[RMDB]
RNA sequence: GGGAACGACUCGAGUAGAGUCGAAAAGAGGAUCGCUUGAACUCAGGAGUUCAAGGCUGCAGUGAGCUAUGAUCGCACCACUGUACUCCAGCCUGGGCAACAUAGCAAGACCCUGUCUCAAAAACAACAACGCUACUCAUUUCGAUGAGUAGCGUUGAAAAGAAACAACAACAACAAC
Reactivity to 2A3 in 0.01 (KOAc 150mM, MgCl2 10mM, bicine 150mM(pH8.5), 24C), signal-to-noise 2, nucleotides 027 to 126: g120a030g040g010a040u050c020g000c050u000u000g000a010a010c000u010c100a080g090g110a080g080u160u120c100a010a060g060g000c050u070g000c000a010g000u020g020a020g020c030u070a080u240g050a200u230c120g030c020a050c050c020a010c000u010g030u090a050c080u020c020c000a010g020c010c030u040g000g000g080c030a070a010c010a060u150a000g000c030a060a030g070a050c060c000c040u050g060u000c010u020c030a090a120a040a030a040c070a030a020
Reactivity to DMS in 0.01 (KOAc 150mM, MgCl2 10mM, bicine 150mM(pH8.5), 24C), signal-to-noise 2, nucleotides 027 to 126: g040a080g000g000a030u000c050g000c010u000u010g000a050a020c000u000c110a100g000g000a140g010u000u020c060a070a070g020g020c300u000g060c040a040g000u000g040a200g000c030u010a040u020g000a100u000c190g000c060a080c020c000a070c040u000g020u020a040c080u000c130c030a040g010c040c090u000g000g000g000c000a020a090c040a040u020a020g020c040a110a050g000a040c040c040c000u000g010u020c010u000c040a140a010a120a070a060c120a040a210